[RMDB]
The record gives the reactivity of an RNA of 207 nucleotides to 2A3. For 2A3 the reverse transcriptase was SuperScript II with manganese. The RNA was probed in 150 mM KOAc, 10 mM MgCl2 and 150 mM bicine (pH 8.5) at 24 C. The data come from the RNA Mapping Database (RMDB), library ARCHII.

RNA sequence: GGGAACGACUCGAGUAGAGUCGAAAACGGUCUCGACGGGGGUCGCCGAGGGCGUGGCUGCGCGCCGAGGUGCGGGUGGCCUCGUAAAAACCCGCAACGGCAUAACUGCCAACACCAACUACGCUCUCGCGGCUUAAUGACCGCGACCUCGCCCGGUCUGUCGGAUAUAGUUCGCUAUAUCCGACAGAAAAGAAACAACAACAACAAC
Reactivity to 2A3 in 0.01 (KOAc 150mM, MgCl2 10mM, bicine 150mM(pH8.5), 24C), signal-to-noise 1, nucleotides 027 to 156: c060g020g020u030c020u050c120g190a190c030g030g010g000g010g010u000c000g010c150c040g010a020g010g000g000c000g020u040g010g000c070u090g040c120g000c010g020c120c020g010a040g050g080u050g000c020g000g010g000u010g030g040c010c020u030c020g010u010a000a000a020a020a020c030c000c000g000c040a030a050c080g020g000c030a030u120a200a090c040u190g000c000c000a000a010c020a030c080c020a000a150c010u030a000c000g000c000u000c000u000c030g000c000g000g000c000u010u070a060a000u240g100a060c000c000g030c010g010a000c000c000u000c050g030c000c000c000g010g010u000